[RMDB]
RNA sequence: GGGAACGACUCGAGUAGAGUCGAAAAUAUCCAGAAAUAGGAUAGGUCGCAGUGGCAAGGGGACCCCGACUGUUUACCAAAAACACAGACCGCUGCUAGUCCGUAAGGAUGUGUAUAGCGGCCGAAACAAACCUUAGAAAUUCGUUUCUAAGGUUUGAAAAGAAACAACAACAACAAC
Reactivity to DMS in 0.01 (KOAc 150mM, MgCl2 10mM, bicine 150mM(pH8.5), 24C), signal-to-noise 5, nucleotides 027 to 126: u010a030u000c000c000a090g000a110a080a120u040a060g000g010a030u000a050g000g010u010c090g010c040a050g020u010g010g000c040a060a070g000g010g010g010a190c060c020c020c020g010a080c090u000g010u000u000u010a130c070c080a070a080a060a070a070c140a100c140a150g000a080c000c000g000c000u000g000c020u000a230g010u000c000c010g010u040a110a120g000g000a020u000g000u010g000u010a120u030a050g000c000g000g000c010c020g010a070a060a160
Reactivity to 2A3 in 0.01 (KOAc 150mM, MgCl2 10mM, bicine 150mM(pH8.5), 24C), signal-to-noise 9, nucleotides 027 to 126: u080a020u020c020c010a040g180a050a180a070u250a070g000g030a010u020a050g020g030u020c010g000c070a040g020u060g080g000c050a080a100g040g010g010g070a080c010c000c000c000g010a020c020u050g070u090u090u120a130c020c020a070a050a020a040a000c090a010c010a040g070a070c000c010g010c010u010g010c010u000a030g010u000c010c010g020u070a040a080g010g000a020u040g030u010g010u030a050u070a230g010c000g020g000c010c020g050a050a030a000
Conditions: 150 mM KOAc, 10 mM MgCl2 and 150 mM bicine (pH 8.5), 24 C. Chemical mapping of a 177-nucleotide RNA with DMS and 2A3. For DMS the reverse transcriptase was MarathonRT. Reactivities are given for positions 27 through 126.